Chemical mapping of a 177-nucleotide RNA with DMS. The data come from the RNA Mapping Database (RMDB), library TTRDES.
[RMDB]
RNA sequence: GGGAACGACUCGAGUAGAGUCGAAAAAAAAAGAUAUGGAGUAGCCGAGCGUACGUGCUAAGACAGAACGUCGGAAACGACGUUUCGAGCACCAGUACGCGUUUGACGCUACUCCUAAGUCAAAAAACAUACUCUUGCUCUUCGGAGCAAGAGUAUGAAAAGAAACAACAACAACAAC
Reactivity to DMS in 0.01 (KOAc 150mM, MgCl2 10mM, bicine 150mM(pH8.5), 24C), signal-to-noise 2, nucleotides 027 to 126: a010a030a130a100a170g000a020u010a300u000g000g010a040g010u010a000g000c000c010g000a050g000c010g020u000a050c000g000u000g030c000u000a120a050g010a100c300a160g040a040a000c000g060u000c000g010g000a130a130a120c010g000a000c000g000u010u010u010c070g000a030g000c020a010c070c270a130g000u000a010c000g000c000g000u030u000u000g010a140c300g010c010u000a000c010u000c010c000u000a000a040g000u020c000a000a010a020a020a070a100